The record gives the reactivity of an RNA of 177 nucleotides to DMS and 2A3. The reactions ran in a buffer of 150 mM KOAc, 10 mM MgCl2 and 150 mM bicine (pH 8.5), at 24 C.

[RMDB]
RNA sequence: GGGAACGACUCGAGUAGAGUCGAAAAGAUAUGGAUCCACGAGAGCGAUGAAAUCAGUCGGAAACGACUGAGUGGAGCUCGAGUGGAUCCUAAGUCAAACUGAGUAAACGUUCGCGUUUACUCAGAAGCAUCAUGAGUACUUCGGUACUCAUGAUGCAAAAGAAACAACAACAACAAC
Reactivity to DMS in 0.01 (KOAc 150mM, MgCl2 10mM, bicine 150mM(pH8.5), 24C), signal-to-noise 2, nucleotides 027 to 126: g000a040u020a300u000g000g020a020u000c000c000a020c010g030a300g020a000g000c000g030a190u000g010a060a130a090u000c000a000g020u000c000g000g000a110a110a180c000g010a000c000u000g000a000g000u000g020g000a150g000c000u010c000g010a300g020u000g000g000a000u010c000c000u000a010a040g000u000c060a070a070a260c010u010g000a020g010u000a000a010a000c000g020u000u010c210g040c000g010u000u000u000a000c000u000c000a010g000a060a090
Reactivity to 2A3 in 0.01 (KOAc 150mM, MgCl2 10mM, bicine 150mM(pH8.5), 24C), signal-to-noise 1, nucleotides 027 to 126: g010a010u000a010u050g010g000a010u000c020c020a020c060g180a130g010a000g070c000g300a300u030g070a010a020a070u040c000a000g020u000c000g020g000a030a000a010c000g000a010c010u020g030a000g010u100g000g020a030g010c020u020c030g000a010g030u000g000g000a000u000c010c000u000a000a000g000u000c010a000a050a130c030u000g010a000g020u020a000a000a000c030g040u050u050c300g030c000g140u000u010u020a000c010u030c000a000g000a000a010

The 2A3 profile rests on 1,913 reads. For 2A3 the reverse transcriptase was SuperScript II with manganese.